This 207-nucleotide RNA was probed chemically with DMS and 2A3. For 2A3 the reverse transcriptase was SuperScript II with manganese.
[RMDB]
RNA sequence: GGGAACGACUCGAGUAGAGUCGAAAAGACGUGGAGGUUACGCGCCCUCCUUUGCGCGUAAGUACGUCGAAAUUCGGUGCUUUGGAUCGCACCGUUCGAUCCAUUUGAUAUCCGCUUAGUGCCGCGGUUGGGCAUUUACACUUACCCGAAAGGGGAAGAGCAGUAUGAUAUUCGUAUCAUACUGCUCAAAAGAAACAACAACAACAAC
Reactivity to DMS in 0.01 (KOAc 150mM, MgCl2 10mM, bicine 150mM(pH8.5), 24C), signal-to-noise 4, nucleotides 027 to 156: g010a040c030g040u010g010g000a150g030g010u010u000a010c010g020c020g010c010c090c080u010c100c060u000u010u010g020c010g020c000g020u000a020a050g020u000a040c020g020u000c010g030a060a060a140u000u000c010g030g030u000g000c040u000u000u010g010g010a070u010c070g010c030a300c100c160g010u010u000c020g010a040u000c020c030a090u000u000u000g000a180u010a110u000c010c010g030c070u000u010a080g010u000g010c010c030g020c050g030g000u000u000g010g010g000c040a080u010u000u010a100c070a090c090u000u000a200c010c000c000g010a090a110a230g000g000g010g010a080a100
Reactivity to 2A3 in 0.01 (KOAc 150mM, MgCl2 10mM, bicine 150mM(pH8.5), 24C), signal-to-noise 7, nucleotides 027 to 156: g020a000c020g010u040g020g130a120g080g140u020u010a010c000g000c010g000c040c010c010u260c010c040u080u100u110g000c000g000c010g000u000a010a000g070u070a010c020g010u000c020g020a050a040a040u140u110c030g010g010u030g010c020u060u050u090g020g020a040u060c030g010c040a140c130c010g000u060u040c010g010a010u010c010c020a040u050u050u120g130a100u060a090u140c020c010g030c070u050u110a030g020u030g040c010c010g070c060g110g010u090u060g050g000g010c020a020u060u050u100a060c080a010c020u070u120a060c000c000c000g040a060a030a020g000g010g000g010a030a020

For 2A3, 9,026 sequencing reads were counted. The RNA was probed in 150 mM KOAc, 10 mM MgCl2 and 150 mM bicine (pH 8.5) at 24 C. The DMS profile rests on 13,932 reads. The data come from the RNA Mapping Database (RMDB), library OK3TST.